Notes: This 207-nucleotide RNA was probed chemically with 2A3. Source: RMDB library VIROID, as collected in RNAgym. For 2A3, 840 sequencing reads were counted. 2A3 adducts were read by reverse transcription with SuperScript II with manganese.

RNA sequence: GGGAACGACUCGAGUAGAGUCGAAAAUGUUUCCUAGCCAGGGAUUUUCAUCCUCAAGUUUCUUGACUUUCUUCUCAACCUUCCGGAGGUCUCUCUUGAGUUCCUCUAACUUCUUUCUUCCGCUCACCCACUGCUCGAGAACCUCUUCUCUCUCCCCCGUACAGUAAUGCUUCGGCAUUACUGUACGAAAAGAAACAACAACAACAAC
Reactivity to 2A3 in 0.01 (KOAc 150mM, MgCl2 10mM, bicine 150mM(pH8.5), 24C), signal-to-noise 1, nucleotides 027 to 156: u070g020u000u060u020c000c000u010a020g000c070c050a030g000g010g050a020u190u150u210u260c060a040u070c020c020u060c020a020a090g000u000u120u060c050u060u120g040a100c010u040u140u020c050u120u010c010u030c020a050a060c040c020u060u050c050c030g070g000a040g080g000u020c010u020c020u040c000u060u260g020a010g020u120u100c000c010u060c010u040a070a040c050u050u050c000u090u100u000c040u040u010c010c000g040c020u030c010a010c030c010c030a070c010u020g010c020u020c040g020a020g050a170a130c020c020u020c000u040u010c020u010c000u000c000u000c010c020c000c000